The record gives the reactivity of an RNA of 177 nucleotides to 2A3 and DMS. The reactions ran in a buffer of 150 mM KOAc, 10 mM MgCl2 and 150 mM bicine (pH 8.5), at 24 C.
[RMDB]
RNA sequence: GGGAACGACUCGAGUAGAGUCGAAAAGAUAUGGAUGGCCAGCAUCGAUCGGACUGUCUCGGAAACGAGAUUCCGGGAGCUGGUCCUAAGUCAAACAAAGGUUCUCACUUCGGUGAGAACCUUUGAACCAUCAUAAAAGGUUCGCCUUUUAUGAUGGAAAAGAAACAACAACAACAAC
Reactivity to 2A3 in 0.01 (KOAc 150mM, MgCl2 10mM, bicine 150mM(pH8.5), 24C), signal-to-noise 4, nucleotides 027 to 126: g060a070u210a080u300g100g040a070u110g040g000c010c010a000g000c030a220u300c060g110a090u080c000g030g000a040c150u180g040u040c000u000c000g010g030a080a090a050c010g010a000g000a020u050u020c000c000g020g020g000a020g020c010u000g010g010u010c000c000u010a010a010g040u030c040a070a100a130c010a000a040a020g000g000u010u000c000u010c000a000c010u080u130c300g050g000u010g010a000g000a000a010c000c000u000u000u000g000a000a000
Reactivity to DMS in 0.01 (KOAc 150mM, MgCl2 10mM, bicine 150mM(pH8.5), 24C), signal-to-noise 8, nucleotides 027 to 126: g010a090u010a100u010g010g010a150u010g010g000c000c010a020g020c010a280u000c130g000a080u010c020g000g000a050c300u010g010u000c000u010c000g000g010a120a080a210c010g010a020g010a030u000u000c000c000g000g000g000a020g010c010u000g000g010u000c010c010u000a040a230g010u000c070a100a100a250c010a000a010a000g000g010u000u000c000u000c000a010c000u000u010c180g020g010u000g010a000g000a000a000c000c000u000u000u000g000a080a210